[RMDB]
RNA sequence: GGGAACGACUCGAGUAGAGUCGAAAAAGAGCAACAACGCAAGAUUAAAGCUGCUGAGUGGAAGGUUCAUCAAGCGCGUAUUCAAUCAGCAAUUGAUCAGCUUGAUGCGCAAGGCAAAGUCGAACUUGCUGGACUAGCUGCUGCUGAGGCAACACUGGUACGACUCAGGUUUCGACCUGAGUCGUACAAAAGAAACAACAACAACAAC
Reactivity to 2A3 in 0.01 (KOAc 150mM, MgCl2 10mM, bicine 150mM(pH8.5), 24C), signal-to-noise 1, nucleotides 027 to 156: a010g150a020g010c070a060a070c000a030a010c040g000c060a000a050g020a100u100u150a240a040a000g090c020u050g040c020u040g020a020g050u040g040g040a060a000g010g000u010u000c000a000u000c000a020a020g020c050g000c080g010u050a090u140u150c060a060a020u030c080a110g090c060a060a180u020u040g030a000u040c000a000g000c020u000u030g000a000u010g050c060g000c020a120a000g020g020c010a080a060a000g020u040c070g090a090a000c050u020u020g000c060u070g000g050a000c010u050a040g000c070u040g000c000u010g000c000u030g190a030g010g040c060a070a000c060a010c060u040g040
Conditions: 150 mM KOAc, 10 mM MgCl2 and 150 mM bicine (pH 8.5), 24 C. The record gives the reactivity of an RNA of 207 nucleotides to 2A3. It was measured as part of the RMDB library OK3TST. The 2A3 profile rests on 610 reads.